The data come from the RNA Mapping Database (RMDB), library OK3TST.
Structure probing data (DMS and 2A3) for a 207-nucleotide construct.
The RNA was probed in 150 mM KOAc, 10 mM MgCl2 and 150 mM bicine (pH 8.5) at 24 C.
DMS adducts were read by reverse transcription with MarathonRT.
Reactivities are rounded to 0.1 and cut off at 0 and 3.
Values cover nucleotides 27 to 156.

RNA sequence: GGGAACGACUCGAGUAGAGUCGAAAAUAGGCGAACGAGAGGCCCUCUCGUGUGCGGAGUUGUCACGCUGACACAAUUGUUAUGAUGUCCGAUUCCGGUAGCAUCGCGGCGAUGGUUUCAUAGGACAUCUUAUGAACCCAAGGGCUUCGGGGAAGCACGACGGUAUGAGUUUCGACUCAUACCGUCGAAAAGAAACAACAACAACAAC
Reactivity to DMS in 0.01 (KOAc 150mM, MgCl2 10mM, bicine 150mM(pH8.5), 24C), signal-to-noise 1, nucleotides 027 to 156: u010a120g010g000c050g030a020a090c040g010a090g000a060g060g040c010c060c030u000c020u010c040g030u000g030u000g000c020g010g010a250g020u000u000g020u000c020a110c150g000c060u000g040a100c010a100c010a080a150u000u000g010u000u010a060u010g030a060u000g020u000c000c000g020a130u000u000c060c020g010g000u010a160g000c020a070u000c110g020c070g020g000c030g010a270u000g000g030u010u000u000c040a070u000a140g030g010a120c170a080u000c000u010u010a100u000g000a030a090c040c010c040a040a000g000g030g010c020u000u000c030g000g020g020g030a130a060g000c050a100
Reactivity to 2A3 in 0.01 (KOAc 150mM, MgCl2 10mM, bicine 150mM(pH8.5), 24C), signal-to-noise 2, nucleotides 027 to 156: u250a060g060g000c010g000a070a010c030g000a030g010a000g160g000c030c010c000u010c020u010c030g010u010g020u050g040c060g040g020a100g020u160u110g050u040c050a020c130g070c130u080g090a030c000a000c020a080a140u100u120g020u010u090a090u140g010a040u000g030u000c000c030g040a060u080u020c030c000g070g070u070a050g030c000a050u060c140g000c050g260g000c040g050a050u060g010g000u010u040u010c050a040u110a110g020g000a010c000a000u000c010u000u000a040u030g060a030a020c050c000c000a020a000g050g000g010c000u040u010c020g000g000g000g020a090a040g000c080a010